[RMDB]
RNA sequence: GGGAACGACUCGAGUAGAGUCGAAAAGAUAUGGACGAUCCUGGAGGAGGUAGGCGAUUCUCGGAAACGAGGGCCUACUACCCACCCUCCUGGAUCGUCCUAAGUCAAAGCUCAGUUCGCUGAGCAACAUCAUAUCCAAGUUCGCUUGGAUAUGAUGAAAAGAAACAACAACAACAAC
Reactivity to 2A3 in 0.01 (KOAc 150mM, MgCl2 10mM, bicine 150mM(pH8.5), 24C), signal-to-noise 7, nucleotides 027 to 126: g030a030u080a040u110g010g000a000c000g000a000u000c000c010u020g010g000a010g010g010a020g000g020u010a000g010g030c060g240a300u260u030c000u000c010g010g030a090a070a030c010g000a000g000g020g000c000c000u000a010c000u010a010c010c010c010a110c020c000c000u010c000c000u000g000g000a000u000c000g010u000c000c000u000a010a010g000u010c020a070a050a020g000c000u000c000a010g020u110u120c270g030c140u010g010a010g010c000a010a010
Reactivity to DMS in 0.01 (KOAc 150mM, MgCl2 10mM, bicine 150mM(pH8.5), 24C), signal-to-noise 8, nucleotides 027 to 126: g000a030u010a300u000g000g010a010c000g010a010u000c000c000u000g010g000a020g010g010a080g000g000u000a000g000g010c100g010a060u010u010c000u000c000g010g010a080a100a200c020g000a010g000g010g010c020c000u020a070c010u000a010c030c040c090a300c180c000c000u000c000c000u000g000g000a000u000c000g000u000c000c000u000a000a050g010u000c030a080a080a130g010c000u000c000a000g020u000u020c260g020c010u000g000a010g000c010a060a130